[RMDB]
RNA sequence: GGGAACGACUCGAGUAGAGUCGAAAACAACAGGCACGGAUGAACGCUGCCAGAGAACAAUACUCAAGACGGCUUGAAGUGCGCGAUCGCAUCGCAGGAGCCGGAGCCACUACCACGGCUGCAGGGCUGGCAAUGGGUGCGCCAGUGAUGGCAGCAGUCUAUUGGAAUUGUUCGCAAUUCCAAUAGAAAAAGAAACAACAACAACAAC
Reactivity to DMS in 0.01 (KOAc 150mM, MgCl2 10mM, bicine 150mM(pH8.5), 24C), signal-to-noise 2, nucleotides 027 to 156: c070a080a110c040a120g000g030c050a130c060g010g020a210u020g020a070a070c090g000c020u000g010c000c030a090g000a190g020a040a060c060a110a190u000a060c020u000c040a120a150g020a110c020g040g010c020u000u000g040a150a090g010u000g000c000g010c060g030a150u020c060g000c010a300u000c060g050c040a200g000g000a030g010c010c020g000g020a090g050c000c010a110c070u000a130c090c020a080c040g000g020c020u020g020c040a100g000g020g000c000u000g020g000c000a060a080u010g010g020g030u000g040c090g000c010c010a020g010u000g000a140u010g000g020c000a090g030c020a120g000
Reactivity to 2A3 in 0.01 (KOAc 150mM, MgCl2 10mM, bicine 150mM(pH8.5), 24C), signal-to-noise 4, nucleotides 027 to 156: c040a020a030c040a030g050g020c040a010c100g060g040a100u120g090a230a020c040g030c050u020g000c020c020a020g000a010g010a040a010c090a090a080u140a150c020u030c050a040a040g080a040c030g000g060c030u030u060g060a120a070g070u070g100c030g000c030g070a030u220c060g020c020a030u010c020g000c060a030g090g150a010g000c010c010g010g020a010g000c010c020a030c050u180a120c040c080a050c090g060g000c010u030g050c020a060g000g120g000c000u000g020g000c000a020a110u110g010g050g010u050g020c010g000c000c000a030g000u020g070a060u060g020g010c000a000g000c000a000g030
Structure probing data (DMS and 2A3) for a 207-nucleotide construct. For 2A3, 2,523 sequencing reads were counted. 2A3 is a SHAPE reagent: it acylates the 2'-hydroxyl of flexible nucleotides of all four kinds. Source: RMDB library OK3TST, as collected in RNAgym.